[RMDB]
RNA sequence: GGGAACGACUCGAGUAGAGUCGAAAAAAAGCUAAUGUUGAGCAUAACGAAGACAUUGCUGGUGAGAGACAGGCGCGUAACUUUGUCAAUGCGUGUUUAGGUAUAGAAGAGAUUGUGGUGAAACCGGAUAUAGGCACACAUUCGUGUGUGCCUAUAUAAAAGAAACAACAACAACAAC
Reactivity to DMS in 0.01 (KOAc 150mM, MgCl2 10mM, bicine 150mM(pH8.5), 24C), signal-to-noise 5, nucleotides 027 to 126: a070a050a040g000c020u010a040a050u010g010u010u000g010a160g000c110a130u040a100a130c090g000a140a080g010a030c050a020u010u010g000c000u000g000g000u020g000a090g000a120g000a050c090a040g000g020c080g000c060g000u010a040a080c110u000u010u000g020u000c130a060a050u020g000c020g010u020g000u000u000u030a050g000g010u000a040u010a070g000a060a070g000a070g000a110u020u000g000u000g000g000u000g000a050a090a100c060c050g030g000
Reactivity to 2A3 in 0.01 (KOAc 150mM, MgCl2 10mM, bicine 150mM(pH8.5), 24C), signal-to-noise 4, nucleotides 027 to 126: a010a010a000g100c140u140a080a020u070g020u070u050g000a030g020c100a130u020a170a040c070g070a110a020g000a050c020a070u040u040g000c010u060g040g000u080g030a110g000a010g020a040c030a040g030g000c000g000c000g060u060a090a090c120u180u060u070g050u100c060a060a040u090g000c020g000u030g070u050u030u080a060g010g060u090a100u050a110g150a180a000g030a000g040a100u060u110g030u060g070g020u080g070a150a070a040c010c020g000g020